[RMDB]
RNA sequence: GGGAACGACUCGAGUAGAGUCGAAAACGUGGCGGUACUCAUGGUGUUUUGCUCCCGAGGCAACCACCGCAAUACAUUUGUGGUACCGUGAGCAUCGAGCUCCGUAAAUACGGAGUGGGUGGAGGUGCCGAGAUUUUUAUUCCUAAGCUGUGGGAUGGGUACUCGACAUAUUCGUAUGUCGAGUACCAAAAGAAACAACAACAACAAC
Reactivity to 2A3 in 0.01 (KOAc 150mM, MgCl2 10mM, bicine 150mM(pH8.5), 24C), signal-to-noise 1, nucleotides 027 to 156: c050g070u120g070g000c030g000g020u080a050c050u120c130a050u030g000g000u010g020u040u140u080u180g050c010u090c080c130c130g120a150g080g000c010a020a020c010c010a000c000c010g080c040a010a010u280a090c110a240u080u100u090g040u050g000g000u000a070c000c000g040u000g030a010g000c000a050u040c060g050a050g010c000u000c020c020g030u040a010a030a290u300a050c000g000g000a000g010u000g000g050g000u110g000g140a130g050g020u040g000c040c040g180a140g000a040u080u240u000u000u070a030u130u000c030c030u010a100a000g000c030u020g000u080g050g030g000a010u140g120